[RMDB]
RNA sequence: GGGAACGACUCGAGUAGAGUCGAAAAGAAAGAAAGCAUUGGCAGACUGGGAAAUCUCUGCAGGCAAAUGUGAUGUCACUGAAGAAACCACACACUUACCUGUAGAGAUUCUUCAGUCUGACAACAACCUGAUUGAUGCUUUCGAGCAUCAAUCAGGAAAAGAAACAACAACAACAAC
Reactivity to 2A3 in 0.01 (KOAc 150mM, MgCl2 10mM, bicine 150mM(pH8.5), 24C), signal-to-noise 4, nucleotides 027 to 126: g070a010a080a000g140a060a070a010g090c170a120u020u010g010g010c000a000g000a000c000u000g000g000g010a020a100a110u000c000u000c000u010g000c000a000g000g000c030a010a060a120u030g010u040g060a230u050g020u080c040a080c200u170g050a150a060g080a140a170a030c030c000a010c000a000c000a000c050u010u050a030c000c000u000g010u000a000g000a000g000a000u000u000c000u010u030c000a000g010u000c000u000g000a000c000a010a010c010a000a040
Reactivity to DMS in 0.01 (KOAc 150mM, MgCl2 10mM, bicine 150mM(pH8.5), 24C), signal-to-noise 1, nucleotides 027 to 126: g040a140a090a110g000a010a060a160g000c090a170u000u000g040g050c000a000g050a000c000u000g020g000g000a020a000a000u030c000u000c000u000g050c000a000g000g040c010a000a010a020u000g000u000g000a120u000g010u010c070a120c170u080g060a180a060g000a170a160a090c220c070a100c010a000c000a000c150u010u000a060c060c000u010g000u000a000g000a000g000a000u000u000c020u000u000c050a000g000u000c000u030g000a000c000a040a020c140a220a240